[RMDB]
Source: RMDB library OK3TST, as collected in RNAgym.
This 207-nucleotide RNA was probed chemically with 2A3.
Reactivities are given for positions 27 through 156.
Conditions: 150 mM KOAc, 10 mM MgCl2 and 150 mM bicine (pH 8.5), 24 C.
2A3 adducts were read by reverse transcription with SuperScript II with manganese.
RNA sequence: GGGAACGACUCGAGUAGAGUCGAAAAGGCUGUUGCGGAACUUCGGUGUUUAACAGCAUCAUUAACGCGACGCUGCUUUUCUCCUGUUUCACCGAAAUCUGUCCCGAUUUUGAUCCGUUUGAGCCAUUGCUUUUAGCGUAUGGUGAUGACAUCAUUAUACGACUUUAGCUUUCGAGCUAAAGUCGUAAAAAGAAACAACAACAACAAC
Reactivity to 2A3 in 0.01 (KOAc 150mM, MgCl2 10mM, bicine 150mM(pH8.5), 24C), signal-to-noise 2, nucleotides 027 to 156: g100g000c100u080g030u010u020g010c010g070g050a120a160c090u070u110c130g000g030u010g060u050u080u140a060a000c020a040g010c000a050u010c000a020u030u210a120a020c000g000c030g030a020c040g210c300u120g000c020u060u030u010u000c060u010c030c010u030g050u000u010u040c040a040c010c020g060a030a030a030u110c080u070g090u060c010c070c040g020a070u050u060u040u060g020a030u030c130c070g010u000u000u000g000a010g000c020c010a000u030u010g020c030u040u090u170u300a090g020c010g030u020a000u030g000g000u080g000a020u020g000a020c010a000u050c000a000u020u190a080